[RMDB]
RNA sequence: GGGAACGACUCGAGUAGAGUCGAAAAAGUUUGGUUCGCUAUGGUGCAACUCUUUAAGGCAAUAACGAACUAAUUCUAAGCAAGUAAUGGAGAAAUGCCAGGGUCACUAUCUAGCCAUAAUAGUGCUGUAAGUGACUUAGAUUCGUCUAAGUCACAAUGACGCUGUAAGUUUCGACUUACAGCGUCAAAAAGAAACAACAACAACAAC
Reactivity to DMS in 0.01 (KOAc 150mM, MgCl2 10mM, bicine 150mM(pH8.5), 24C), signal-to-noise 2, nucleotides 027 to 156: a100g000u000u000u000g010g000u010u000c010g000c010u000a070u000g040g000u000g000c030a140a060c070u000c120u010u000u010a090a100g020g030c030a090a050u000a030a080c050g020a030a050c000u000a030a130u000u010c020u010a120a170g020c010a050a070g000u000a080a150u010g000g040a110g000a080a080a080u000g000c020c040a120g000g010g030u000c060a040c060u010a020u000c030u000a120g030c040c050a100u030a050a070u000a070g000u000g000c050u000g010u000a060a160g040u000g000a030c000u000u000a000g000a090u000u000c300g020u000c000u020a010a030g020u010c000a000c000a040a180
Reactivity to 2A3 in 0.01 (KOAc 150mM, MgCl2 10mM, bicine 150mM(pH8.5), 24C), signal-to-noise 2, nucleotides 027 to 156: a000g030u030u040u060g000g000u020u010c020g010c050u070a040u060g040g070u090g070c100a170a150c030u030c040u120u130u110a110a040g040g000c000a000a100u110a040a050c030g010a050a020c000u010a000a000u040u130c060u060a080a000g040c010a030a020g060u100a080a080u140g040g020a060g020a070a090a010u060g010c030c000a060g050g000g000u010c000a000c020u000a020u070c020u020a030g010c000c000a050u040a170a100u040a110g080u050g000c070u060g020u080a190a060g020u010g000a000c000u000u000a000g000a000u040u040c120g040u000c130u000a010a010g000u000c000a000c000a000a030